RNA sequence: GGGAACGACUCGAGUAGAGUCGAAAACGCAAUUGAUAACGACCCAGCCAAACGUGAAGAGAUGAUUGCUCGUAGCGGGCGGACGACGGUACCUCAGGUAUUUAUUGAUGGGCAGCAUAUCGGCGGCGUGACAGAGUGACUUCGGUCACUCUGUCACAAAAGAAACAACAACAACAAC
Reactivity to 2A3 in 0.01 (KOAc 150mM, MgCl2 10mM, bicine 150mM(pH8.5), 24C), signal-to-noise 1, nucleotides 027 to 126: c020g000c020a040a260u060u120g020a090u090a090a060c080g040a040c050c000c030a020g010c020c000a030a020a120c010g000u040g100a140a070g000a000g000a050u200g020a130u150u300g030c000u000c020g000u010a010g000c010g000g060g010c000g010g000a040c070g010a000c040g030g030u060a080c030c000u100c060a050g020g040u010a040u010u180u010a260u030u130g080a150u140g000g030g040c050a030g000c030a000u000a020u150c040g000g030c060g060g010c040
Reactivity to DMS in 0.01 (KOAc 150mM, MgCl2 10mM, bicine 150mM(pH8.5), 24C), signal-to-noise 1, nucleotides 027 to 126: c020g020c110a080a110u000u010g000a070u030a070a070c150g020a160c070c000c000a090g060c030c000a000a300a270c030g030u000g000a180a300g000a040g000a060u000g000a110u020u000g000c000u000c010g020u010a270g010c060g000g000g020c240g010g000a040c120g000a100c120g000g080u000a050c020c020u000c220a090g010g000u000a050u010u000u000a100u030u020g020a150u000g000g020g030c040a120g000c070a050u000a030u000c000g000g000c250g000g000c050